[RMDB]
The data come from the RNA Mapping Database (RMDB), library 15KREP.
Chemical mapping of a 177-nucleotide RNA with DMS and 2A3.
For DMS the reverse transcriptase was MarathonRT.
The reactions ran in a buffer of 150 mM KOAc, 10 mM MgCl2 and 150 mM bicine (pH 8.5), at 24 C.
The DMS profile rests on 5,528 reads.
The 2A3 profile rests on 3,638 reads.
RNA sequence: GGGAACGACUCGAGUAGAGUCGAAAAAGCAGUCACUGCCGGCCCAUUCAUGGAUAAUGCUAUUAAUGUUGGUGGUACAGGAUUACAGUAUGCCGCCAUUACUGCACCUUAUGUAGUUCUCACUGGCCAUAGUACGUUUCUUCGGAAACGUACUAUGAAAAGAAACAACAACAACAAC
Reactivity to DMS in 0.01 (KOAc 150mM, MgCl2 10mM, bicine 150mM(pH8.5), 24C), signal-to-noise 5, nucleotides 027 to 126: a080g020c030a020g020u010c110a090c050u010g010c100c020g000g010c020c020c030a110u010u010c130a070u000g000g010a080u010a100a120u010g020c050u000a060u000u000a030a060u010g000u000u010g020g030u000g010g030u010a070c040a060g010g000a130u010u010a110c130a070g000u010a050u010g000c000c020g000c100c020a030u000u000a030c070u000g000c010a090c060c050u000u010a070u010g010u000a060g000u000u000c010u000c040a100c110u010g020g000c240
Reactivity to 2A3 in 0.01 (KOAc 150mM, MgCl2 10mM, bicine 150mM(pH8.5), 24C), signal-to-noise 4, nucleotides 027 to 126: a000g010c020a010g040u080c040a020c130u020g020c010c020g040g000c000c040c000a030u080u080c040a070u070g050g010a030u050a190a020u170g020c030u050a030u100u090a110a040u100g070u160u060g060g020u050g010g010u050a030c020a040g060g090a130u070u120a040c010a030g030u060a040u060g020c000c000g000c000c000a010u030u050a010c010u000g000c000a020c040c010u080u050a090u200g110u070a050g050u030u020c030u000c020a090c060u040g040g020c020
Background
2A3 adducts were read by reverse transcription with SuperScript II with manganese.